[RMDB]
RNA sequence: GGGAACGACUCGAGUAGAGUCGAAAAGACGCCUUUAGAAGAAGAGGCUAGGGGGUAUUCCGGUGUGGGAUACUUAGUAAUAUGCAACGCUAAUUGCAUAAGAUUGUAGGACGGAAUUUACAGUAUUUAGAGAUAAGCACGUUCGCGUGCUUAUCAACAAUAGUGCCAACUUCGGUUGGCACUAUUGAAAAGAAACAACAACAACAAC
Reactivity to 2A3 in 0.01 (KOAc 150mM, MgCl2 10mM, bicine 150mM(pH8.5), 24C), signal-to-noise 4, nucleotides 027 to 156: g040a010c050g020c010c010u060u070u110a210g050a210a020g020a070a010g020a030g000g030c020u040a080g040g000g000g010g010u030a040u050u010c050c010g090g050u140g040u140g050g010g010a000u010a080c000u030u030a030g010u060a020a090u020a030u050g000c000a010a020c070g030c260u140a080a070u060u010g010c000a010u000a030a040g040a080u070u160g030u120a030g010g040a010c020g010g050a040a020u090u130u120a110c060a040g060u050a110u090u140u120a090g020a000g000a040u000a010a000g000c000a000c000g030u040u060c140g010c000g070u000g000c000u000u000a000u000c000a010a000
Reactivity to DMS in 0.01 (KOAc 150mM, MgCl2 10mM, bicine 150mM(pH8.5), 24C), signal-to-noise 2, nucleotides 027 to 156: g010a090c090g010c000c010u000u000u010a070g000a160a210g000a070a180g040a030g000g020c030u000a100g000g010g010g000g020u020a050u000u000c030c050g010g010u000g020u000g000g040g000a100u000a030c020u020u000a090g020u010a070a220u010a040u010g000c010a030a050c060g020c140u010a070a120u000u000g010c000a030u020a040a090g010a170u000u000g010u010a070g030g000a100c050g000g010a080a070u000u000u000a100c070a130g020u000a070u000u010u010a120g000a240g010a020u000a000a020g040c020a010c000g020u000u010c300g010c040g050u000g000c000u000u000a010u010c000a030a070